The record gives the reactivity of an RNA of 177 nucleotides to DMS and 2A3. For 2A3, 4,228 sequencing reads were counted. DMS adducts were read by reverse transcription with MarathonRT. The RNA was probed in 150 mM KOAc, 10 mM MgCl2 and 150 mM bicine (pH 8.5) at 24 C. Values cover nucleotides 27 to 126.
RNA sequence: GGGAACGACUCGAGUAGAGUCGAAAAGAUAUGGAGUAGUCUAACAUUCUGCACCCGUUGAAAUCGGAAACGAUGGAGGGUGGGAAUGUAAUCUACUCCUAAGUCAAAAGGUAUCUUCGGAUACCAACAAUUGUAUGCACUUCGGUGCAUACAAUUGAAAAGAAACAACAACAACAAC
Reactivity to DMS in 0.01 (KOAc 150mM, MgCl2 10mM, bicine 150mM(pH8.5), 24C), signal-to-noise 2, nucleotides 027 to 126: g010a040u010a300u010g000g010a020g010u000a010g000u000c120u010a100a050c000a020u000u010c000u000g010c000a010c000c000c010g040u000u030g000a090a190a010u010c010g000g000a110a100a140c000g010a020u000g010g020a040g000g000g040u000g000g000g000a000a010u010g000u000a060a080u000c000u000a010c000u000c000c010u000a000a050g000u010c030a130a060a130a100g010g020u000a000u000c000u010u010c180g020g000a020u000a000c000c010a080a100
Reactivity to 2A3 in 0.01 (KOAc 150mM, MgCl2 10mM, bicine 150mM(pH8.5), 24C), signal-to-noise 2, nucleotides 027 to 126: g050a000u060a020u210g000g000a010g000u030a000g000u040c110u140a090a040c020a010u020u040c010u300g270c000a000c010c000c000g120u220u060g040a010a000a020u010c010g000g020a120a010a040c030g000a020u020g010g030a030g010g020g010u020g000g000g010a000a000u010g010u000a000a010u030c000u000a000c000u000c000c000u000a030a020g030u030c020a030a060a020a140g010g010u000a000u020c020u040u130c270g140g000a000u010a020c020c000a000a000